Notes
The data come from the RNA Mapping Database (RMDB), library OK2TRN. The record gives the reactivity of an RNA of 177 nucleotides to 2A3 and DMS. DMS adducts were read by reverse transcription with MarathonRT. For 2A3 the reverse transcriptase was SuperScript II with manganese. The reactions ran in a buffer of 150 mM KOAc, 10 mM MgCl2 and 150 mM bicine (pH 8.5), at 24 C.
RNA sequence: GGGAACGACUCGAGUAGAGUCGAAAACAGUCGCGAAGCGUAAAACCGUCAUGUGCGGUGACGAGAUUAAUCGCGGCACUCGGCAGACGACCAUUACGUUUAAAAACAUGGCUGGAGGCAGCAAAAACAUCCCAGUAUCCUUCGGGAUACUGGGAUGAAAAGAAACAACAACAACAAC
Reactivity to 2A3 in 0.01 (KOAc 150mM, MgCl2 10mM, bicine 150mM(pH8.5), 24C), signal-to-noise 1, nucleotides 027 to 126: c000a020g000u020c000g040c000g060a040a000g010c000g050u040a040a090a000a040c020c000g000u000c050a240u160g110u260g160c000g060g000u000g020a000c090g030a000g000a120u170u190a110a180u030c010g000c000g000g030c000a020c010u130c000g020g000c020a030g000a060c040g010a070c010c010a030u060u040a030c050g050u010u100u170a140a140a000a020a030c040a030u100g030g010c010u020g000g020a030g030g040c030a020g010c070a050a050a010a010a010
Reactivity to DMS in 0.01 (KOAc 150mM, MgCl2 10mM, bicine 150mM(pH8.5), 24C), signal-to-noise 2, nucleotides 027 to 126: c140a120g050u010c020g020c060g010a050a140g000c050g000u000a050a050a090a100c070c030g000u000c010a040u000g020u010g010c110g000g000u000g010a010c010g000a030g000a110u000u000a110a100u000c020g040c020g010g010c000a050c030u000c050g000g000c030a000g020a010c020g000a080c070c020a110u000u010a030c110g020u000u000u010a070a030a040a110a080c090a070u000g000g030c040u000g000g000a060g010g000c050a050g020c050a080a030a060a120a110